The record gives the reactivity of an RNA of 177 nucleotides to DMS and 2A3. Values cover nucleotides 27 to 126. Source: RMDB library OK2TRN, as collected in RNAgym. The reactions ran in a buffer of 150 mM KOAc, 10 mM MgCl2 and 150 mM bicine (pH 8.5), at 24 C. For 2A3 the reverse transcriptase was SuperScript II with manganese.

RNA sequence: GGGAACGACUCGAGUAGAGUCGAAAAUGAAGCGUUCGGCCUUGCCAUUGGUCUGUGGGCGGUAAGGUCGGGUAAAGCGGUGCUUGAUGCCCAGCUCAUGGCACAGCGCGGCGAAGGCGCGGCUGCAUACCAUUAGUCCUUUCGAGGACUAAUGGUAAAAAGAAACAACAACAACAAC
Reactivity to DMS in 0.01 (KOAc 150mM, MgCl2 10mM, bicine 150mM(pH8.5), 24C), signal-to-noise 5, nucleotides 027 to 126: u010g000a110a080g000c060g020u010u010c010g030g000c000c010u000u000g010c000c000a170u000u010g030g010u000c050u000g020u010g020g030g010c070g000g000u010a020a030g010g020u000c010g020g000g010u000a050a090a090g020c020g010g020u000g010c010u010u000g010a190u000g000c020c010c070a220g010c090u010c080a080u000g010g010c060a080c080a050g020c040g010c210g020g000c010g000a100a080g000g010c030g030c030g000g020c020u000g020c090a190
Reactivity to 2A3 in 0.01 (KOAc 150mM, MgCl2 10mM, bicine 150mM(pH8.5), 24C), signal-to-noise 3, nucleotides 027 to 126: u140g000a080a030g040c020g060u040u020c000g050g000c000c000u010u020g000c000c010a090u110u180g130g010u060c070u060g100u200g070g030g050c050g000g000u040a030a010g000g010u020c040g000g000g000u210a180a130a010g010c040g030g020u020g010c000u040u080g020a080u180g080c030c010c000a020g000c010u040c060a110u120g060g010c040a010c020a050g010c060g000c010g030g030c040g040a050a020g030g000c010g000c010g070g000c020u050g000c000a040